[RMDB]
RNA sequence: GGGAACGACUCGAGUAGAGUCGAAAAGAUAUGGAGCGAAUCGGGAGCAUUGGAAUCGGAAACGAUUCUGAUGCGAAGAACGAGUUCGCUCCUAAGUCAAACGGGUAUGAGUUCGCUCAUACCCGAAGAACAAGGUUUUGUUCGCAAAACCUUGUUCAAAAGAAACAACAACAACAAC
Reactivity to DMS in 0.01 (KOAc 150mM, MgCl2 10mM, bicine 150mM(pH8.5), 24C), signal-to-noise 3, nucleotides 027 to 126: g010a030u000a110u020g010g000a020g010c000g010a020a040u000c000g000g010g000a070g010c000a010u000u000g000g000a010a000u000c000g020g010a050a020a060c000g020a010u000u000c000u000g010a000u000g000c000g000a050a120g010a120a200c000g000a020g010u000u000c000g020c010u000c000c000u000a000a090g000u000c010a080a130a280c010g020g000g020u010a000u000g010a020g000u000u010c290g020c010u000c000a010u000a010c000c000c000g000a000a040
Reactivity to 2A3 in 0.01 (KOAc 150mM, MgCl2 10mM, bicine 150mM(pH8.5), 24C), signal-to-noise 2, nucleotides 027 to 126: g000a000u030a000u090g000g000a000g000c010g000a010a020u030c010g010g000g050a240g010c010a020u010u010g000g010a010a020u000c000g000g040a050a000a010c010g000a010u020u000c000u010g000a000u020g000c020g020a060a040g050a010a000c000g000a020g300u050u000c000g000c020u000c000c010u000a020a000g030u010c030a060a070a110c020g000g010g010u020a000u000g000a000g040u030u230c300g120c100u010c000a000u000a010c020c000c000g000a000a020